Structure probing data (2A3 and DMS) for a 177-nucleotide construct. The DMS profile rests on 1,403 reads. Conditions: 150 mM KOAc, 10 mM MgCl2 and 150 mM bicine (pH 8.5), 24 C. The 2A3 profile rests on 2,437 reads.

[RMDB]
RNA sequence: GGGAACGACUCGAGUAGAGUCGAAAAUGGCAGUACCAAACCGAAGCAGGACGAUCUCAUUCUCACUUGUUUCAGAGGGUGGGUGAAGCAGUUGCAAAUAGAUUACAAAGGCAACGAAAUAAUGACGGAGCAUUCAUUAGUUCGCUAAUGAAUGCUCAAAAGAAACAACAACAACAAC
Reactivity to 2A3 in 0.01 (KOAc 150mM, MgCl2 10mM, bicine 150mM(pH8.5), 24C), signal-to-noise 3, nucleotides 027 to 126: u100g050g000c030a010g000u090a070c060c000a080a040a000c030c030g030a060a000g040c060a040g060g050a020c020g020a040u000c020u010c030a030u070u000c010u010c020a050c040u090u110g020u040u170u070c030a010g020a030g050g010g000u020g000g010g020u000g010a020a010g000c060a020g000u010u000g010c000a040a040a120u120a080g170a120u150u110a060c070a050a070a010g120g000c000a010a010c020g070a100a050a010u250a050a090u080g080a020c120g100
Reactivity to DMS in 0.01 (KOAc 150mM, MgCl2 10mM, bicine 150mM(pH8.5), 24C), signal-to-noise 2, nucleotides 027 to 126: u000g000g000c030a050g030u000a180c030c050a000a140a130c080c040g020a090a080g030c060a090g000g000a100c130g000a150u000c060u000c010a040u010u000c000u010c030a110c120u000u010g040u000u010u000c080a010g000a030g000g000g000u000g000g000g000u010g010a120a100g000c080a110g000u010u000g010c030a020a050a050u000a060g000a060u020u000a070c170a080a040a150g000g000c030a010a030c020g000a110a080a090u020a050a080u000g010a110c230g000

Values cover nucleotides 27 to 126.
2A3 adducts were read by reverse transcription with SuperScript II with manganese.